This 177-nucleotide RNA was probed chemically with 2A3 and DMS. DMS adducts were read by reverse transcription with MarathonRT. The reactions ran in a buffer of 150 mM KOAc, 10 mM MgCl2 and 150 mM bicine (pH 8.5), at 24 C. For 2A3, 440 sequencing reads were counted. For DMS, 1,195 sequencing reads were counted.
RNA sequence: GGGAACGACUCGAGUAGAGUCGAAAAUGGCGCCCAACGUGGGGCUGGAUACGAGGGAAUCCUGUGAGGAAGAGAGCGCGUAACACGGCCGGCAGUCAAAGUGAAAGAAAAACCUUCCAGCUGCCGCUGGCAGUCCUUUCUUCGGAAAGGACUGCCAAAAAGAAACAACAACAACAAC
Reactivity to 2A3 in 0.01 (KOAc 150mM, MgCl2 10mM, bicine 150mM(pH8.5), 24C), signal-to-noise 1, nucleotides 027 to 126: u150g090g010c000g050c010c130c000a030a050c040g050u110g000g060g000g020c000u000g020g010a000u000a030c030g020a080g020g010g000a000a070u090c000c000u050g000u030g060a030g250g040a040a060g210a000g000a000g260c060g020c060g110u030a040a040c030a000c080g000g000c050c050g000g030c040a020g080u280c180a150a000a000g010u030g180a000a110a030g110a040a110a000a030a140c000c000u000u080c020c000a000g000c000u000g060c000c070g000c000
Reactivity to DMS in 0.01 (KOAc 150mM, MgCl2 10mM, bicine 150mM(pH8.5), 24C), signal-to-noise 1, nucleotides 027 to 126: u030g030g000c000g000c000c000c090a060a040c160g040u010g000g000g000g000c020u000g010g000a110u000a040c050g000a070g000g000g000a160a060u020c050c010u040g000u000g000a070g000g010a010a050g040a140g000a010g000c110g000c000g000u060a080a070c140a100c040g030g010c060c000g020g020c000a040g010u010c040a040a060a200g000u010g010a110a050a100g030a160a240a080a150a000c140c000u030u010c080c030a180g000c020u000g010c040c120g010c100